[RMDB]
Source: RMDB library OK2TRN, as collected in RNAgym. Chemical mapping of a 177-nucleotide RNA with 2A3 and DMS. The reactions ran in a buffer of 150 mM KOAc, 10 mM MgCl2 and 150 mM bicine (pH 8.5), at 24 C.
RNA sequence: GGGAACGACUCGAGUAGAGUCGAAAAUGACUUCUGUAUUUAUCCUUUGCUGGUGUCAGGAAGUUCCUUUCCUUUCUGGAAAAUGCAGAAUGGGUCUGAAAUCCAUGCCCACCUUUGGCAUGAGCUGCAUGUUAGUACCCUUCGGGGUACUAACAUGAAAAGAAACAACAACAACAAC
Reactivity to 2A3 in 0.01 (KOAc 150mM, MgCl2 10mM, bicine 150mM(pH8.5), 24C), signal-to-noise 2, nucleotides 027 to 126: u070g020a000c020u020u030c010u050g030u030a050u030u030u020a290u090c000c040u120u150u220g100c150u140g030g120u090g090u120c020a010g020g030a020a040g050u100u230c000c010u020u040u080c010c020u050u100u050c030u000g010g020a030a030a010a020u050g020c000a000g020a030a070u140g050g060g010u010c050u020g040a080a090a000u050c030c000a020u020g010c010c030c010a120c040c030u160u210u070g000g010c010a020u000g040a050g080c050u070g060
Reactivity to DMS in 0.01 (KOAc 150mM, MgCl2 10mM, bicine 150mM(pH8.5), 24C), signal-to-noise 4, nucleotides 027 to 126: u000g000a070c050u000u000c010u000g010u000a010u000u000u000a120u010c000c010u010u000u010g020c130u000g010g020u000g010u010c060a050g010g010a050a070g000u010u000c110c100u000u010u000c040c010u000u000u010c060u000g000g010a040a040a020a020u000g000c020a010g010a060a080u000g020g010g010u000c030u000g010a080a090a140u010c070c010a010u000g010c010c010c200a120c180c140u000u000u010g020g000c010a020u000g000a090g020c180u000g000